[RMDB]
RNA sequence: GGGAACGACUCGAGUAGAGUCGAAAAGCACAUGGAGGUGGGUGUGCGGGAUCUGCGAAAUCGCACAAGUCAGGUGGUCGAUGCGGUCAAGGCCGGGGUGCCGGUGACUCUCACGGUACACGGGGAGCAGCAUAGAAUAGUUCGCUAUUCUAUGCUGAAAAGAAACAACAACAACAAC
Reactivity to DMS in 0.01 (KOAc 150mM, MgCl2 10mM, bicine 150mM(pH8.5), 24C), signal-to-noise 8, nucleotides 027 to 126: g010c080a060c090a080u000g010g000a100g010g010u010g010g000g020u000g010u000g010c050g010g000g010a090u000c070u000g010c070g020a070a080a090u010c040g010c030a040c070a050a090g010u010c090a080g000g020u000g010g010u000c050g010a080u000g010c090g010g000u010c070a070a110g000g000c020c030g010g010g000g010u000g010c020c010g000g010u000g010a080c080u000c050u000c040a070c030g000g010u000a050c080a080c070g000g000g010g010a140g010
Reactivity to 2A3 in 0.01 (KOAc 150mM, MgCl2 10mM, bicine 150mM(pH8.5), 24C), signal-to-noise 7, nucleotides 027 to 126: g040c020a030c020a170u100g040g020a070g060g150u160g050g030g010u070g010u030g030c050g000g020g010a080u060c050u080g030c040g060a090a070a120u140c030g020c010a030c010a050a090g080u110c060a020g000g090u040g020g030u060c030g010a040u070g030c020g010g030u040c050a050a070g090g000c010c010g030g000g020g030u060g020c000c000g020g010u020g020a030c010u000c010u010c060a120c060g010g010u100a070c060a030c050g020g000g000g000a020g040
The record gives the reactivity of an RNA of 177 nucleotides to DMS and 2A3. For DMS the reverse transcriptase was MarathonRT. The reactions ran in a buffer of 150 mM KOAc, 10 mM MgCl2 and 150 mM bicine (pH 8.5), at 24 C.